[RMDB]
RNA sequence: GGGAACGACUCGAGUAGAGUCGAAAAAGCUGCAGGACGCAGUGGCCAUCCACCAGUGCAAGAAAGGCAUCUUCUGCCUGGUGAAGCAGGCCAAGAUAUCCUUCGAGGUCACUUCCACCGACCAUCGUGCAUAUGUUAUAUUCGUAUAACAUAUGCAAAAAGAAACAACAACAACAAC
Reactivity to DMS in 0.01 (KOAc 150mM, MgCl2 10mM, bicine 150mM(pH8.5), 24C), signal-to-noise 9, nucleotides 027 to 126: a110g010c020u000g010c030a130g000g020a170c200g010c050a030g010u000g010g000c000c010a220u000c030c000a020c010c010a020g010u020g020c010a050a050g010a020a040a090g010g010c270a100u010c060u000u000c020u000g000c000c000u000g000g010u000g000a040a040g010c180a110g010g010c000c050a060a080g000a080u010a090u000c020c020u000u000c050g010a100g000g010u000c020a060c120u000u000c060c060a110c140c090g000a050c030c020a080u010c080g020
Reactivity to 2A3 in 0.01 (KOAc 150mM, MgCl2 10mM, bicine 150mM(pH8.5), 24C), signal-to-noise 9, nucleotides 027 to 126: a000g020c010u030g000c010a070g150g090a060c090g000c020a020g010u040g030g000c000c010a090u030c010c000a010c000c000a020g010u050g240c040a140a070g050a080a040a010g130g030c050a120u040c000u020u000c000u010g000c000c000u000g000g000u010g000a010a000g040c090a040g000g000c010c000a000a000g030a020u120a040u040c020c010u050u060c040g020a040g000g030u020c010a020c090u120u030c040c030a070c030c030g020a010c020c010a170u080c050g050

An RNA of 177 nucleotides, treated with DMS and 2A3 and read out base by base. For DMS, 43,276 sequencing reads were counted. For 2A3, 40,544 sequencing reads were counted. For 2A3 the reverse transcriptase was SuperScript II with manganese.